[RMDB]
RNA sequence: GGGAACGACUCGAGUAGAGUCGAAAAUGGGAGAUAAGGUAUCUGAUGGGCAAAGACAAAACAUUCGUACCAUCAAGUACGAUAGAUAAUGAUGCACCUAAUAUUAUUAAUCGCAUGGCUAACUGUAUUCAACCAUGCACUAGAAAAGAUAUUGCAGCCCACAGAGCUCAUUCGUGAGCUCUGUGGGAAAAGAAACAACAACAACAAC
Reactivity to 2A3 in 0.01 (KOAc 150mM, MgCl2 10mM, bicine 150mM(pH8.5), 24C), signal-to-noise 1, nucleotides 027 to 156: u090g020g070g000a070g040a130u100a160a000g000g000u000a070u030c090u020g060a060u010g020g010g000c080a150a040a060g070a040c010a010a050a140a000c060a070u130u010c000g010u060a040c020c010a220u100c000a000a060g000u000a000c000g000a000u020a110g040a040u160a100a070u070g020a030u220g060c060a190c020c020u040a070a120u010a050u300u130a100u070u110a160a000u160c000g020c000a000u050g000g000c050u050a060a000c130u110g060u100a200u140u220c010a110a030c050c000a050u000g020c000a000c010u010a020g170a080a070a000a010g000a020u070a000u040u040g010c050a000g030